This 177-nucleotide RNA was probed chemically with 2A3. The RNA was probed in 150 mM KOAc, 10 mM MgCl2 and 150 mM bicine (pH 8.5) at 24 C. Source: RMDB library OK1LIB, as collected in RNAgym.

[RMDB]
RNA sequence: GGGAACGACUCGAGUAGAGUCGAAAAUCGACGGUGAAUCCCGGAGAGGCCUUAGAGAAAUCUCUUAACAACUGCACUCUCUGUUUAGCAACUGGAGUUUCUUCACCCAUUGCACCAUAAAACCUAAGCAGGAGCGAUGAUUCGUCAUCGCUCCUGCAAAAGAAACAACAACAACAAC
Reactivity to 2A3 in 0.01 (KOAc 150mM, MgCl2 10mM, bicine 150mM(pH8.5), 24C), signal-to-noise 1, nucleotides 027 to 126: u020c040g030a000c040g060g020u030g030a040a000u180c060c030c100g000g000a000g000a000g000g000c000c060u040u060a000g000a000g020a180a300a300u220c040u000c000u020u190a070a010c140a000a000c020u110g000c020a110c000u020c000u000c000u000g000u160u080u000a040g070c000a060a000c040u070g000g110a150g030u070u110u250c080u060u000c060a050c000c050c000a000u000u060g050c120a000c000c000a000u110a020a150a000a040c030c020u060a110a000